An RNA of 177 nucleotides, treated with DMS and 2A3 and read out base by base. For DMS the reverse transcriptase was MarathonRT.
RNA sequence: GGGAACGACUCGAGUAGAGUCGAAAACCGGACCCUAAAAUAUUCAGGUAGCAUGACGGAAGCUAUGAAUUAAUCCUGGUGGAGGGGUGUGUUCAGUUUGAGGGAGGAUGAUAAAAUGGAACGGAGAACAAGGUCUAACUUUCGAGUUAGACCUUGUAAAAGAAACAACAACAACAAC
Reactivity to DMS in 0.01 (KOAc 150mM, MgCl2 10mM, bicine 150mM(pH8.5), 24C), signal-to-noise 6, nucleotides 027 to 126: c010c020g010g010a130c030c000c030u010a050a080a080a070u040a070u020u010c030a070g000g030u010a050g010c020a080u020g020a100c110g010g020a120a120g020c060u010a040u020g000a040a040u010u010a080a100u020c030c020u000g000g010u020g000g000a130g000g010g000g010u000g010u020g010u000u010c090a070g000u000u020u020g020a110g010g000g000a040g010g010a050u000g000a090u030a020a050a070a080u010g010g000a050a040c050g000g010a120g000a080
Reactivity to 2A3 in 0.01 (KOAc 150mM, MgCl2 10mM, bicine 150mM(pH8.5), 24C), signal-to-noise 4, nucleotides 027 to 126: c020c000g020g080a030c040c020c030u130a060a030a060a090u170a050u030u100c030a010g100g000u010a010g010c010a050u130g070a100c080g070g020a060a000g010c050u030a020u160g070a030a030u140u130a010a060u060c000c010u030g040g000u090g080g000a030g020g010g000g000u040g030u020g000u010u070c070a160g000u010u110u170g070a050g020g000g010a020g070g010a050u030g010a000u140a070a100a010a010u090g080g000a030a050c030g050g040a030g010a060